[RMDB]
RNA sequence: GGGAACGACUCGAGUAGAGUCGAAAAGAACACGAGUGUGAGUGUGUGAACACGAGUACUCUCGAGAGUACGUGUUCGUGAGAUCGUACGAGUACGUGUGUGAUCUCUCGUGUUCACACGUGAACUCGAGAACACUCGUUCUCUCGUUCUCACGAUCAUACCUUAGCACGUUCGCGUGCUAAGGUAUAAAAGAAACAACAACAACAAC
Reactivity to DMS in 0.01 (KOAc 150mM, MgCl2 10mM, bicine 150mM(pH8.5), 24C), signal-to-noise 1, nucleotides 027 to 156: g000a110a040c030a060c020g020a100g010u010g070u030g000a190g040u000g000u000g000u020g030a090a030c010a010c050g010a100g000u000a020c040u020c010u000c170g000a210g010a100g020u000a100c020g030u000g000u040u010c070g000u020g020a180g030a050u000c010g020u010a070c080g010a110g000u000a030c030g040u020g010u000g000u020g000a070u000c040u000c000u000c060g000u000g050u000u000c000a030c020a000c070g070u000g030a100a100c010u000c010g020a160g040a110a070c000a000c050u010c030g000u010u000c030u000c030u000c040g000u000u000c020u010c040a140c080g000a150u010c080
Reactivity to 2A3 in 0.01 (KOAc 150mM, MgCl2 10mM, bicine 150mM(pH8.5), 24C), signal-to-noise 4, nucleotides 027 to 156: g040a010a010c040a010c080g010a030g000u030g010u030g040a040g030u090g000u000g010u030g040a010a000c000a000c000g010a000g030u070a070c030u020c030u050c090g300a300g000a010g110u030a000c010g010u020g000u050u040c020g000u010g040a060g000a020u060c030g050u070a020c050g010a020g040u060a030c030g010u030g030u020g020u070g140a140u030c070u000c000u020c040g000u010g010u020u030c010a000c000a000c010g020u050g040a030a030c010u010c040g000a050g040a020a000c000a000c000u000c000g000u040u000c010u000c000u000c020g030u010u010c010u000c000a020c040g030a050u090c050

An RNA of 207 nucleotides, treated with DMS and 2A3 and read out base by base. The 2A3 profile rests on 3,726 reads. Conditions: 150 mM KOAc, 10 mM MgCl2 and 150 mM bicine (pH 8.5), 24 C. For DMS, 2,922 sequencing reads were counted. For 2A3 the reverse transcriptase was SuperScript II with manganese. Values are in units of 0.01, from 0 to 300, in steps of 10.